[RMDB]
RNA sequence: GGGAACGACUCGAGUAGAGUCGAAAAUGAGGCCAGACACAGCUCAUUUACUGGAUAAGUUUAGUGAGUGCUUUUCAGAGUUAGGACUCAAUUAUGAUUUUUCAUCGCGAACCAGUAAUAAAGAAGACGAUCUGCUGAUGUUCGCAUCAGCAGAUCGAAAAGAAACAACAACAACAAC
Reactivity to 2A3 in 0.01 (KOAc 150mM, MgCl2 10mM, bicine 150mM(pH8.5), 24C), signal-to-noise 2, nucleotides 027 to 126: u040g000a000g100g110c000c070a000g020a020c030a000c060a030g060c000u000c030a000u000u000u040a000c000u000g020g070a050u160a130a040g000u000u000u300a020g000u000g070a020g000u050g120c000u020u050u110u150c090a050g000a070g100u010u080a090g000g070a000c000u000c000a000a000u270u250a120u190g060a040u040u020u040u140u060c010a000u040c060g000c000g000a170a110c000c030a000g110u110a090a060u090a080a070a000g140a050a000g080a050
Reactivity to DMS in 0.01 (KOAc 150mM, MgCl2 10mM, bicine 150mM(pH8.5), 24C), signal-to-noise 1, nucleotides 027 to 126: u000g000a020g020g000c050c090a140g000a010c170a110c080a130g000c060u020c000a130u000u000u000a000c000u010g000g000a170u000a140a180g000u000u000u000a060g100u020g000a000g000u000g000c180u000u000u040u120c300a030g000a170g070u000u000a040g000g000a000c030u000c000a000a040u000u000a040u000g000a000u000u040u070u000u000c000a020u000c210g000c000g000a110a100c070c060a000g020u000a110a000u050a040a080a050g010a070a110g040a290